[RMDB]
RNA sequence: GGGAACGACUCGAGUAGAGUCGAAAAACUUUGGCCGACGCUGCUAGGCGGGUGCGCACUGCUGUCUGGCCCGGCGCCGCGCUAGGGCGCACGUUUCGCUGUGCGGAGGGUAACCGGGCUGAAAUAAUGAACCAUUGGAAUUCGUUCCAAUGGUUCAAAAAGAAACAACAACAACAAC
Reactivity to 2A3 in 0.01 (KOAc 150mM, MgCl2 10mM, bicine 150mM(pH8.5), 24C), signal-to-noise 1, nucleotides 027 to 126: a000c060u120u070u070g040g000c000c010g010a020c030g000c030u050g000c030u050a100g000g030c020g000g050g020u040g000c030g040c000a010c050u030g010c050u040g030u220c040u100g020g010c000c000c030g180g000c150g060c000c000g010c000g000c060u100a050g030g120g000c010g000c000a020c020g050u140u160u190c090g000c020u060g000u040g010c040g010g030a040g000g110g010u040a090a110c000c020g040g000g000c030u000g090a060a050a040u300a050a150
Reactivity to DMS in 0.01 (KOAc 150mM, MgCl2 10mM, bicine 150mM(pH8.5), 24C), signal-to-noise 3, nucleotides 027 to 126: a050c070u000u000u000g020g000c030c030g010a100c060g000c040u000g020c030u000a170g010g000c010g010g000g010u000g000c030g000c040a080c040u000g010c040u010g000u000c070u010g000g030c000c040c040g020g000c120g010c020c020g010c030g000c070u010a060g000g010g000c020g000c040a030c070g010u000u020u010c020g010c050u000g030u000g020c010g000g000a100g000g020g010u010a090a110c040c030g010g000g010c010u010g000a020a080a090u010a080a130